This 177-nucleotide RNA was probed chemically with 2A3.
The 2A3 profile rests on 897 reads.
The RNA was probed in 150 mM KOAc, 10 mM MgCl2 and 150 mM bicine (pH 8.5) at 24 C.
Values cover nucleotides 27 to 126.
RNA sequence: GGGAACGACUCGAGUAGAGUCGAAAACUCGAAAGAGACCUGCAUAUCUUAGGCAGAUGAACAAGUCACGUCUGAAAAGCGAAAGCCCUAAGAUAUGCAGCUGUGAAGACUUGACGCAGAAAAUAAAGCAGUCAUGUACGUUCGCGUACAUGACUGCAAAAGAAACAACAACAACAAC
Reactivity to 2A3 in 0.01 (KOAc 150mM, MgCl2 10mM, bicine 150mM(pH8.5), 24C), signal-to-noise 1, nucleotides 027 to 126: c040u030c010g030a000a070a000g030a000g030a030c010c030u010g000c000a010u010a000u000c020u000u010a010g030g000c000a000g000a000u000g000a020a020c020a000a010g000u020c000a000c140g000u000c000u000g050a250a230a040a180g000c010g000a040a040a000g000c030c000c000u000a000a000g000a010u010a000u000g040c000a000g000c000u030g010u000g030a080a090g000a000c000u000u020g020a030c000g000c000a030g130a060a100a040a020u300a060a180a000